[RMDB]
RNA sequence: GGGAACGACUCGAGUAGAGUCGAAAACAGUACUUCGGUACUGCUACAGAUAUGGAACCCAUCUACCUAAGACAGUGCCUCUAUUCGGAAACGAAUAACGUGAGGCACAAUGACGGGUAGAGUGGGUUCCUAAGUCGCACGGGCACUUCGGUGCCAACUUCCGUGUAUAGUUCGCUAUACACGGAAGAAAAGAAACAACAACAACAAC
Reactivity to 2A3 in 0.01 (KOAc 150mM, MgCl2 10mM, bicine 150mM(pH8.5), 24C), signal-to-noise 3, nucleotides 027 to 156: c000a010g000u000a000c010u050u150c240g170g010u000a000c010u000g000c010u100a090c080a100g040a050u040a020u090g000g000a000a000c000c010c000a000u000c000u000a010c000c000u040a060a100g180a080c080a100g080u010g000c000c000u030c000u020a020u010u000c000g030g040a050a110a070c010g030a020a010u050a100a050c270g140u100g030a020g000g000c000a000c010a010a020u000g010a000c080g000g000g000u010a000g030a010g080u110g010g000g000u000u000c000c000u000a000a000g000u020c030g000c070a070c080g050g000g000c020a010c010u040u060c290g080g010u000g020c000c000a010a010
Reactivity to DMS in 0.01 (KOAc 150mM, MgCl2 10mM, bicine 150mM(pH8.5), 24C), signal-to-noise 2, nucleotides 027 to 156: c040a000g020u010a020c020u000u010c300g080g010u010a000c000u010g050c010u010a200c100a200g000a200u020a180u010g010g010a030a040c000c000c020a080u000c010u000a010c010c000u000a110a300g000a120c090a050g010u000g010c010c000u010c030u000a110u000u010c010g000g000a180a060a180c020g020a030a020u010a040a090c260g000u000g000a010g030g030c020a020c010a030a020u010g060a150c240g010g000g050u000a010g000a030g040u020g040g000g000u000u010c000c000u000a010a150g000u010c020g030c060a050c100g050g010g030c010a000c010u000u000c290g040g040u000g010c010c000a020a080
Structure probing data (2A3 and DMS) for a 207-nucleotide construct. 2A3 adducts were read by reverse transcription with SuperScript II with manganese. For DMS the reverse transcriptase was MarathonRT. Values are in units of 0.01, from 0 to 300, in steps of 10. Reactivities are given for positions 27 through 156.